Source information
Chemical mapping of a 207-nucleotide RNA with DMS. DMS (dimethyl sulfate) methylates the pairing face of unpaired adenines and cytosines. The RNA was probed in 150 mM KOAc, 10 mM MgCl2 and 150 mM bicine (pH 8.5) at 24 C. The data come from the RNA Mapping Database (RMDB), library OK3TST.

[RMDB]
RNA sequence: GGGAACGACUCGAGUAGAGUCGAAAAACGUGCUCGUGGUUACGUCAAGGGCAACCUGAAGAAGGAAGAGGUCUUCAAGCUCCUGAAGCGCAAGACCGAGCCCACCACCAUCUACAAGAAGCAGAAGCUGGACCGCGAUGACAUCCUCGACAUCACGUGGGAGGUAUAAGUUCGCUUAUACCUCCCAAAAAGAAACAACAACAACAAC
Reactivity to DMS in 0.01 (KOAc 150mM, MgCl2 10mM, bicine 150mM(pH8.5), 24C), signal-to-noise 1, nucleotides 027 to 156: a070c050g010u000g020c060u010c030g080u000g100g030u020u000a120c050g000u000c010a100a290g010g040g000c030a090a100c000c010u000g020a030a060g000a170a050g020g010a130a130g020a300g010g000u000c010u010u000c030a050a150g010c020u020c070c220u000g010a130a150g000c010g040c050a050a010g000a070c000c000g000a090g010c010c010c010a090c070c030a070c020c060a030u000c000u000a060c070a060a080g000a100a210g070c030a120g000a060a300g020c020u000g000g000a140c030c030g020c020g000a100u000g000a060c110a090u000c060c020u000c020g010a090c110a030u010c000a030c150g000